[RMDB]
RNA sequence: GGGAACGACUCGAGUAGAGUCGAAAACUCGCUCAAACAUACAGAGUUGUUGUGCGAGAUGAAUCUCUCUGCAUUAGAAUGGUCGAAGAAUCAGCGGCUAUUCGAGACCCAAUUAGAAGCCGCAUUAACAGCUUUGGAACACGCCUUGCUGACGUGAAAUCGUGAUGAUAUUCGUAUCAUCACGAUUAAAAGAAACAACAACAACAAC
Reactivity to 2A3 in 0.01 (KOAc 150mM, MgCl2 10mM, bicine 150mM(pH8.5), 24C), signal-to-noise 3, nucleotides 027 to 156: c010u010c000g030c000u090c030a090a070a100c030a050u250a060c050a070g120a030g180u090u100g020u000u000g000u030g000c000g020a050g030a060u110g060a070a140u030c020u000c020u010c030u090g040c060a130u110u110a120g110a170a070u180g000g000u010c020g000a080a000g030a100a040u030c030a040g010c000g020g040c000u040a020u030u000c000g000a000g020a020c020c040c010a080a160u110u090a080g030a090a000g020c000c000g020c030a010u070u080a040a040c010a010g030c010u090u150u200g050g040a120a020c060a020c050g000c000c000u030u060g030c030u040g000a030c020g030u030g040a020
Reactivity to DMS in 0.01 (KOAc 150mM, MgCl2 10mM, bicine 150mM(pH8.5), 24C), signal-to-noise 3, nucleotides 027 to 156: c010u000c030g030c010u000c050a080a040a110c060a160u000a300c040a130g000a120g000u000u010g010u000u000g020u010g010c000g010a090g000a080u010g010a130a120u000c020u000c010u000c040u000g000c030a060u010u000a080g000a050a070u000g000g000u000c030g020a100a160g000a070a080u010c080a170g010c010g010g000c010u010a090u000u000c000g020a180g000a100c020c010c060a060a160u000u000a140g000a100a110g000c050c000g060c030a170u000u010a140a070c040a040g000c060u010u020u010g020g030a100a180c030a060c000g000c020c030u000u000g010c130u000g020a040c040g010u000g020a090